Conditions: 150 mM KOAc, 10 mM MgCl2 and 150 mM bicine (pH 8.5), 24 C. The record gives the reactivity of an RNA of 207 nucleotides to DMS and 2A3.
RNA sequence: GGGAACGACUCGAGUAGAGUCGAAAAGUAGAUAGUGACCCGAGGAACAAAGGGCAGCAUCCUCAGCUUUGGGCAUCCCAGUCUGUGUCAGGACUUCUCUGAAAGCCCUCUGCCCUCAGCUUUGCGGAGAGAAGGAAGGAUCUUCCAGAUGGGCUGAACCUCCUGUCUAAUUCGUUAGACAGGAGGUAAAAGAAACAACAACAACAAC
Reactivity to DMS in 0.01 (KOAc 150mM, MgCl2 10mM, bicine 150mM(pH8.5), 24C), signal-to-noise 1, nucleotides 027 to 156: g010u030a090g000a120u000a070g000u000g000a060c030c010c000g000a090g000g010a050a180c050a110a150a140g000g020g000c030a090g010c070a150u000c000c020u000c060a080g030c130u000u010u000g000g000g020c000a160u000c040c020c030a210g000u010c050u020g000u010g020u020c050a090g020g000a080c000u010u030c030u000c140u050g000a060a050a050g050c000c000c000u010c060u010g010c000c010c010u000c110a070g040c030u000u000u000g040c120g020g010a050g020a080g040a040a030g000g000a070a070g010g030a130u010c010u000u010c020c020a120g020a120u010g000g010g060c040u020g040a060
Reactivity to 2A3 in 0.01 (KOAc 150mM, MgCl2 10mM, bicine 150mM(pH8.5), 24C), signal-to-noise 2, nucleotides 027 to 156: g070u080a010g030a190u060a040g040u030g120a090c070c010c030g010a070g010g030a050a120c110a200a090a020g000g020g010c010a000g030c000a050u090c000c020u050c020a010g050c050u060u070u050g000g000g000c010a050u040c000c000c000a020g070u000c000u050g110u030g120u140c100a030g010g020a020c000u090u050c130u040c070u100g070a140a020a040g010c000c020c000u000c020u030g000c000c000c000u000c000a030g010c010u070u180u210g050c070g010g000a010g000a000g030a080a070g040g010a040a000g040g000a010u000c030u090u050c010c020a040g020a190u090g000g010g020c000u030g010a020
Description:
DMS adducts were read by reverse transcription with MarathonRT. The DMS profile rests on 2,210 reads.